[RMDB]
RNA sequence: GGGAACGACUCGAGUAGAGUCGAAAAGAGAGAAAACUGGCUCUCCCUUAGCCAUCCGAGUGGACGCUCGUCCUCCUUCGGAUGCCCAGGUCGGACCGCGAGGAGGUGGAGAUGCCAUGCCGACCCGCUUAAUUCUGUAGUUCGCUACAGAAUUAAGAAAAGAAACAACAACAACAAC
Reactivity to DMS in 0.01 (KOAc 150mM, MgCl2 10mM, bicine 150mM(pH8.5), 24C), signal-to-noise 5, nucleotides 027 to 126: g010a090g010a110g000a080a050a100a140c090u000g010g010c010u000c010u000c000c010c120u000u000a090g020c140c020a030u000c030c010g000a040g010u010g000g010a030c070g010c160u010c210g000u000c010c020u000c070c060u010u010c010g010g000a030u000g000c050c020c050a100g020g010u000c070g020g010a300c040c070g000c140g010a100g000g010a090g000g000u010g010g010a040g010a060u000g010c000c020a030u000g010c030c020g000a090c000c010c140g010
Reactivity to 2A3 in 0.01 (KOAc 150mM, MgCl2 10mM, bicine 150mM(pH8.5), 24C), signal-to-noise 4, nucleotides 027 to 126: g050a000g030a000g010a030a090a030a100c110u030g030g000c000u010c000u020c000c000c020u090u140a030g050c040c000a010u010c020c000g010a010g040u060g020g050a030c070g070c200u150c180g080u030c010c020u030c010c050u070u060c010g020g000a000u020g000c000c000c000a030g030g040u050c040g040g050a090c040c020g040c070g070a080g040g030a020g000g000u160g020g030a030g010a030u170g020c010c000a030u060g000c010c000g040a070c000c000c000g000

The data come from the RNA Mapping Database (RMDB), library VIROID. Chemical mapping of a 177-nucleotide RNA with DMS and 2A3. Values cover nucleotides 27 to 126. The RNA was probed in 150 mM KOAc, 10 mM MgCl2 and 150 mM bicine (pH 8.5) at 24 C. For DMS, 5,839 sequencing reads were counted.